The record gives the reactivity of an RNA of 177 nucleotides to DMS and 2A3. The DMS profile rests on 3,184 reads. It was measured as part of the RMDB libraries RFM100 and RFMREP.

RNA sequence: GGGAACGACUCGAGUAGAGUCGAAAAGAACUCGUCACCGUCGUAGAAGGUUGGAGUGAGGGGCGCGGGGUAAGCUUGUGUCCCGAAAGAGAAACAACUCAGACUAUGGUUAAGGCCCCUAAAUACUCUAUGUGUUGUACUUCGGUACAACACAUAGAAAAGAAACAACAACAACAAC
Reactivity to DMS in 0.01 (KOAc 150mM, MgCl2 10mM, bicine 150mM(pH8.5), 24C), signal-to-noise 2, nucleotides 027 to 126: g000a120a040c020u000c030g030u020c020a120c020c020g030u000c050g040u000a050g030a080a090g000g000u000u000g000g000a080g010u000g010a130g010g010g020g040c000g000c010g000g040g010g010u020a030a090g010c060u030u050g010u000g070u000c020c000c000g000a030a080a060g000a120g000a090a100a060c220a050a120c010u030c050a170g000a150c020u010a050u050g010g010u000u000a020a060g000g000c010c000c030c020u010a060a010a070u020a030c070u030
Reactivity to 2A3 in 0.01 (KOAc 150mM, MgCl2 10mM, bicine 150mM(pH8.5), 24C), signal-to-noise 4, nucleotides 027 to 126: g040a040a030c020u020c050g090u080c040a030c040c000g030u050c020g040u060a060g050a240a040g090g010u010u030g050g030a080g030u040g050a080g000g000g000g000c020g000c000g010g020g010g020u100a090a080g140c020u020u040g010u010g010u030c010c000c000g000a010a040a000g080a000g020a030a060a030c040a030a030c020u020c040a010g050a090c030u060a050u150g080g000u030u070a030a030g050g000c000c020c000c000u020a060a090a020u140a060c020u000